[RMDB]
RNA sequence: GGGAACGACUCGAGUAGAGUCGAAAAAUCUGGUUGGCUAUUUGGUGCGUGGGAAGCAUCAUCAAUAGCUGGACCAGUAGCAAUCAUAUCAUGGGUUCUUGGAUUCCUAGUCAUUGGAACCAUUGCCAAUUCCUCCUCGUUUCGACGAGGAGGAAUUAAAAGAAACAACAACAACAAC
Reactivity to DMS in 0.01 (KOAc 150mM, MgCl2 10mM, bicine 150mM(pH8.5), 24C), signal-to-noise 2, nucleotides 027 to 126: a060u010c000u000g010g010u000u000g000g000c000u000a020u000u000u000g000g030u000g000c040g030u010g000g000g000a300a280g000c000a010u010c000a020u000c250a020a010u000a010g020c010u000g030g030a010c000c000a020g000u000a070g020c120a100a070u020c090a060u010a070u010c200a120u000g020g020g000u000u000c030u000u000g010g010a140u000u000c010c000u000a100g020u000c140a130u000u010g010g010a030a030c010c020a070u000u000g010c100c060
Reactivity to 2A3 in 0.01 (KOAc 150mM, MgCl2 10mM, bicine 150mM(pH8.5), 24C), signal-to-noise 1, nucleotides 027 to 126: a000u020c010u010g010g000u020u030g000g000c010u000a000u000u000u040g000g030u020g010c030g020u030g070g170g020a060a020g000c000a000u020c010a010u000c020a000a010u000a010g000c010u020g020g050a010c000c000a010g010u000a000g000c030a000a150u130c040a050u140a050u180c070a140u130g120g000g000u060u050c030u100u110g210g020a300u030u070c000c000u060a040g100u080c060a160u030u140g000g030a010a000c000c020a010u000u050g020c020c000
An RNA of 177 nucleotides, treated with DMS and 2A3 and read out base by base. For 2A3, 1,922 sequencing reads were counted. The RNA was probed in 150 mM KOAc, 10 mM MgCl2 and 150 mM bicine (pH 8.5) at 24 C. It was measured as part of the RMDB library OK2TST. 2A3 adducts were read by reverse transcription with SuperScript II with manganese.